RNA sequence: GGGAACGACUCGAGUAGAGUCGAAAAGAUAUGGAGCUACUGAUUUGAGUCUCUCUCGGAAACGAGAGGGAGGACAAUGAUGAUUUAGCUCCUAAGUCAAAGACACCAUGCUUCGGCAUGGUGUCAAGUCCCAACUAAAGUUCGCUUUAGUUGGGACAAAAGAAACAACAACAACAAC
Reactivity to DMS in 0.01 (KOAc 150mM, MgCl2 10mM, bicine 150mM(pH8.5), 24C), signal-to-noise 4, nucleotides 027 to 126: g010a000u000a230u010g000g010a010g010c000u000a020c050u010g010a230u000u000u010g010a300g000u000c010u000c000u000c000u000c000g000g000a080a030a120c000g010a020g000a020g010g010g000a010g000g010a130c300a090a090u000g000a100u010g010a290u000u010u000a010g020c010u000c000c000u020a010a120g020u000c030a090a120a170g010a020c000a010c000c000a010u000g010c000u000u010c300g020g010c000a000u000g000g010u000g020u010c000a010a090
Reactivity to 2A3 in 0.01 (KOAc 150mM, MgCl2 10mM, bicine 150mM(pH8.5), 24C), signal-to-noise 2, nucleotides 027 to 126: g030a010u070a030u130g000g010a000g010c010u020a010c030u040g030a050u130u100u200g140a140g000u040c030u000c000u000c000u000c060g030g060a070a050a050c030g000a000g000a010g000g030g020a010g010g030a040c060a140a300u300g020a020u030g060a080u090u120u090a000g000c000u020c000c000u010a010a010g020u020c030a120a100a090g020a000c000a010c000c020a000u000g000c010u090u120c210g170g000c000a030u020g000g020u000g010u000c010a000a020